[RMDB]
RNA sequence: GGGAACGACUCGAGUAGAGUCGAAAACAAAACAAUCUUAAAUUCUCAACAAACUGCUUCCCAAGCAGCAGCUGUCCUCCAAGAGCUAAGGAAAGACAAACCAUCUUGCAAGCUAACAAACAAACAAGCAGAGUCAUUGGUUCGCCAAUGACUCUGCAAAAGAAACAACAACAACAAC
Reactivity to 2A3 in 0.01 (KOAc 150mM, MgCl2 10mM, bicine 150mM(pH8.5), 24C), signal-to-noise 1, nucleotides 027 to 126: c000a000a170a000a000c120a030a150u120c150u130u180a250a290a300u180u000c060u060c020a000a140c020a050a300a000c110u130g000c000u130u020c000c000c000a000a000g050c010a000g000c000a000g080c000u030g040u000c040c090u040c040c000a180a020g000a010g040c070u030a000a050g140g040a070a090a000g050a000c000a000a080a000c010c000a200u000c000u130u000g020c030a040a000g030c000u090a160a000c040a020a060a000c070a000a130a000c070a090a020